Chemical mapping of a 177-nucleotide RNA with DMS and 2A3. The data come from the RNA Mapping Database (RMDB), library OK2TRN. DMS adducts were read by reverse transcription with MarathonRT. Reactivities are given for positions 27 through 126. The reactions ran in a buffer of 150 mM KOAc, 10 mM MgCl2 and 150 mM bicine (pH 8.5), at 24 C. For 2A3 the reverse transcriptase was SuperScript II with manganese.
[RMDB]
RNA sequence: GGGAACGACUCGAGUAGAGUCGAAAAAGCAUCCAUUUGUUUGCAUAGAUGGACGUUGCAGACGAAACGAUUGCGCUCGGAAAGUAUGCCAACUUGGUGAAUCCUGUGAAGGUGGUAACUGUGCUCACGUAGGACUACUGUUCGCAGUAGUCCUACGAAAAGAAACAACAACAACAAC
Reactivity to DMS in 0.01 (KOAc 150mM, MgCl2 10mM, bicine 150mM(pH8.5), 24C), signal-to-noise 3, nucleotides 027 to 126: a100g020c060a080u000c000c070a150u000u010u010g030u000u000u010g010c090a050u010a110g020a110u000g000g010a120c120g010u000u010g010c020a020g010a060c040g000a050a070a190c080g010a080u020u010g000c040g030c060u000c030g000g010a100a060a070g000u000a070u000g000c050c040a040a070c110u000u000g010g000u000g000a050a140u000c020c010u000g030u010g020a120a060g000g010u000g000g020u000a050a080c060u000g010u000g000c040u010c100a110
Reactivity to 2A3 in 0.01 (KOAc 150mM, MgCl2 10mM, bicine 150mM(pH8.5), 24C), signal-to-noise 2, nucleotides 027 to 126: a000g020c050a050u040c060c000a000u050u080u050g050u030u030u050g020c050a020u020a170g130a200u130g050g070a070c090g020u110u080g000c030a020g010a100c000g050a190a060a000c080g010a040u040u200g010c040g090c030u040c020g000g070a050a100a050g030u030a050u130g060c070c010a040a030c120u060u100g000g030u010g050a040a050u070c000c040u060g040u080g090a020a050g050g020u060g040g000u000a040a010c020u040g040u100g140c000u050c020a060